[RMDB]
Overview:
Chemical mapping of a 177-nucleotide RNA with 2A3. The reactions ran in a buffer of 150 mM KOAc, 10 mM MgCl2 and 150 mM bicine (pH 8.5), at 24 C. Values cover nucleotides 27 to 126.
RNA sequence: GGGAACGACUCGAGUAGAGUCGAAAAGACGCUGAUGCGAUCGACUGUAAGAUAGAUAGAUUGAGCAGACAGAUACGUACGGCAAGUAUCGUCGCCAGAAUUACAGUCGCAAAUUGCCGUACGAAGACGCGCGUGCAUAGUUCGCUAUGCACGCGCGAAAAGAAACAACAACAACAAC
Reactivity to 2A3 in 0.01 (KOAc 150mM, MgCl2 10mM, bicine 150mM(pH8.5), 24C), signal-to-noise 1, nucleotides 027 to 126: g010a010c070g060c140u130g000a040u220g010c050g040a010u080c000g000a000c000u000g000u070a000a000g190a300u290a130g040a000u120a030g120a000u020u070g050a010g050c160a020g000a000c000a160g010a000u040a180c000g040u010a000c000g000g000c000a010a010g130u050a020u000c030g000u000c000g040c060c010a000g040a190a000u010u000a000c000a010g000u000c000g000c010a070a070a070u000u020g000c000c000g000u000a000c000g040a040a000g110a000